[RMDB]
RNA sequence: GGGAACGACUCGAGUAGAGUCGAAAAAGGUAUGUUAUCUCCUCAACUGUCACGUUGAAUCAUGAAAUUGCCAUUUUUGAGGGUUAAAACAGUCGGGUUUUGUCAGUUUCCAGAGUUCAACCUAUAGUGACGGAUGUGUAUUCGUACACAUCCGUCAAAAAGAAACAACAACAACAAC
Reactivity to DMS in 0.01 (KOAc 150mM, MgCl2 10mM, bicine 150mM(pH8.5), 24C), signal-to-noise 1, nucleotides 027 to 126: a070g000g040u000a020u020g020u000u000a130u010c000u010c030c020u000c020a090a050c080u000g000u000c100a070c180g010u000u010g000a100a100u000c080a080u000g000a030a010a070u000u010g010c020c040a100u000u000u000u000u000g010a040g000g010g020u000u000a080a060a060a100c060a070g000u010c110g000g000g020u000u000u000u000g010u000c020a080g010u010u000u000c010c090a130g010a100g020u010u000c030a010a200c040c040u000a080u000a150g000